RNA sequence: GGGAACGACUCGAGUAGAGUCGAAAAUUGGUGGAGAUUCAAAUGGUAGUUUGUGGCGAUAUACAACCACAGAUGCCAUUGCAACUGUAAAUAGUGCUAACUAUUUUAAUGAUGCAGCAAAUAUGUUAGCUGUUCGUGACCUUGUAAUAGUUCACGAACUGAACUAAGUAUUCGUACUUAGUUCAGUAAAAGAAACAACAACAACAAC
Reactivity to DMS in 0.01 (KOAc 150mM, MgCl2 10mM, bicine 150mM(pH8.5), 24C), signal-to-noise 8, nucleotides 027 to 156: u000u000g010g010u000g000g010a080g010a110u000u000c050a110a030a020u000g010g030u000a020g050u000u000u010g040u000g020g010c000g020a240u010a240u010a160c110a090a030c000c000a010c000a020g010a030u000g000c010c000a020u000u000g010c070a070a100c060u000g020u000a050a050a100u000a080g010u010g020c100u000a060a050c020u000a020u000u000u000u000a060a130u000g010a160u000g020c040a090g020c090a040a050a080u000a040u000g010u000u000a060g020c010u000g010u000u000c010g020u000g010a020c040c010u000u010g010u010a110a130u000a030g000u000u000c010a010c010g000a040
Reactivity to 2A3 in 0.01 (KOAc 150mM, MgCl2 10mM, bicine 150mM(pH8.5), 24C), signal-to-noise 9, nucleotides 027 to 156: u090u080g030g000u050g040g050a070g020a100u130u120c100a040a030a040u020g010g040u040a180g210u020u030u010g010u000g000g000c020g010a010u060a010u050a300c100a060a020c020c000a000c000a000g010a010u010g000c000c010a000u000u020g000c010a040a050c030u060g040u170a020a080a050u090a080g070u070g070c020u030a030a030c000u010a060u030u060u040u120a160a150u140g110a070u140g040c030a030g010c030a020a050a060u160a080u180g040u050u030a020g000c020u030g050u020u010c000g000u000g000a000c010c000u010u020g040u050a080a120u080a200g010u010u010c000a000c010g000a010